Structure probing data (DMS and 2A3) for a 177-nucleotide construct.
RNA sequence: GGGAACGACUCGAGUAGAGUCGAAAACAGGAUCGGCGGCUGGCAACGCACGUGCUGUCGGUGCACAAGAUGGGCUGCGCGCCAAAGCCCACGGACGGCCCCGAGCCUCUGGCGCCCGAGCUGCUGCACUACGUCACGCAUUCGUGCGUGACGUAGUAAAAGAAACAACAACAACAAC
Reactivity to DMS in 0.01 (KOAc 150mM, MgCl2 10mM, bicine 150mM(pH8.5), 24C), signal-to-noise 2, nucleotides 027 to 126: c100a040g020g040a040u010c000g010g000c170g010g010c010u020g010g040c070a020a080c070g010c060a060c080g040u010g040c100u000g020u000c070g010g010u010g000c010a200c140a110a130g000a170u000g000g000g000c020u000g000c130g010c050g000c010c020a060a100a040g000c000c000c030a050c050g010g000a100c110g000g000c000c000c030c020g000a060g000c030c020u010c090u000g000g000c010g010c020c060c050g020a100g010c060u000g000c040u000g000c160
Reactivity to 2A3 in 0.01 (KOAc 150mM, MgCl2 10mM, bicine 150mM(pH8.5), 24C), signal-to-noise 1, nucleotides 027 to 126: c050a000g060g000a070u020c000g020g030c090g090g020c040u010g040g050c070a120a000c070g010c000a060c060g100u190g040c060u080g090u180c050g030g030u020g070c020a030c030a080a070g090a270u090g010g000g040c020u060g020c100g010c000g000c040c000a050a030a000g000c000c010c000a000c020g040g040a010c070g000g030c000c000c010c010g000a000g020c000c000u050c030u010g000g000c030g020c040c020c000g040a020g070c000u100g040c020u020g000c020
Reactivities are rounded to 0.1 and cut off at 0 and 3. 2A3 adducts were read by reverse transcription with SuperScript II with manganese. The DMS profile rests on 1,674 reads. The 2A3 profile rests on 1,656 reads.